[RMDB]
RNA sequence: GGGAACGACUCGAGUAGAGUCGAAAAGCUCAACCUCAAAGCCGGAGCAAUCGGGAUUAUUGCCACAUACAUGCAGUUUACGGCCAGUAUCUAUUAAAUAACUAUCCAUGGCACUGUCACAAGUUUGGAUUGCUUACAAUUUCGAUUGUAAGCAAUCAAAAGAAACAACAACAACAAC
Reactivity to 2A3 in 0.01 (KOAc 150mM, MgCl2 10mM, bicine 150mM(pH8.5), 24C), signal-to-noise 6, nucleotides 027 to 126: g020c000u020c060a040a050c020c010u080c070a120a070a030g040c040c020g060g000a050g020c010a010a070u070c050g080g000g010a030u050u100a040u110u170g030c010c000a040c010a030u100a020c030a030u110g040c010a020g020u050u080u070a050c050g030g000c000c010a020g010u040a040u050c040u030a090u110u180a200a130a120u130a050a040c020u020a020u100c030c010a040u020g000g000c010a010c070u020g030u030c010a020c020a120a080g080u030u040u050g060
Reactivity to DMS in 0.01 (KOAc 150mM, MgCl2 10mM, bicine 150mM(pH8.5), 24C), signal-to-noise 7, nucleotides 027 to 126: g010c040u000c040a090a160c080c030u000c060a060a120a150g030c040c040g000g010a110g000c040a060a040u010c080g000g010g010a080u000u010a060u010u010g010c020c050a070c110a090u010a070c100a060u010g010c050a040g000u000u000u010a100c120g010g010c030c050a070g010u000a050u010c070u000a090u000u010a040a070a080u010a060a060c060u000a080u010c040c030a070u000g000g010c040a070c040u000g010u000c060a060c130a080a070g010u000u000u010g020
Structure probing data (2A3 and DMS) for a 177-nucleotide construct. The data come from the RNA Mapping Database (RMDB), library OK2TST.